[RMDB]
This 207-nucleotide RNA was probed chemically with DMS and 2A3. Conditions: 150 mM KOAc, 10 mM MgCl2 and 150 mM bicine (pH 8.5), 24 C. The DMS profile rests on 3,009 reads. The data come from the RNA Mapping Database (RMDB), library M2RFPK.

RNA sequence: GGGAACGACUCGAGUAGAGUCGAAAAGAAAGAAAGAAAGAAAUCUGACAGAAUGACGGAUUCGAUCGUUGUCGUCGGCGGGCCACCACGUCAUUCCUUCGCACUGUCUCCGGGCAGACCGCCAUAAAAAAGCGGAUCUACUUCGGUAGAUCCGCAAGCAUUAGUAAUAGUUCGCUAUUACUAAUGCAAAAGAAACAACAACAACAAC
Reactivity to DMS in 0.01 (KOAc 150mM, MgCl2 10mM, bicine 150mM(pH8.5), 24C), signal-to-noise 2, nucleotides 027 to 156: g020a090a100a150g000a090a050a090g000a150a100a080g000a130a080a090u010c040u000g030a250c130a060g000a090a010u000g000a040c000g020g000a100u000u010c060g000a110u000c040g000u000u010g000u000c030g000u000c090g030g030c000g040g000g010c020c030a020c010c030a060c030g030u000c020a060u020u000c010c040u010u020c060g020c090a150c070u000g010u000c010u020c050c030g020g020g000c020a040g020a040c010c010g030c020c040a150u030a000a030a050a070a110a100g030c000g010g010a000u010c000u000a020c000u010u010c180g040g060u000a010g000a010u000c010c000g000c010a000a060
Reactivity to 2A3 in 0.01 (KOAc 150mM, MgCl2 10mM, bicine 150mM(pH8.5), 24C), signal-to-noise 6, nucleotides 027 to 156: g040a010a050a010g050a040a080a010g080a060a120a010g090a030a130a040u110c090u140g020a040c030a060g050a050a030u020g000a000c010g020g030a050u170u110c070g060a100u140c070g020u020u040g040u020c030g020u030c070g020g010c010g010g000g030c040c000a050c020c010a050c010g010u000c000a010u030u020c010c020u090u140c070g020c020a030c060u020g020u020c010u020c060c070g020g020g000c000a000g030a060c000c020g000c010c020a030u240a020a110a000a020a010a000g000c000g010g000a000u000c000u000a000c020u020u030c140g040g000u000a000g000a000u000c000c000g000c000a000a000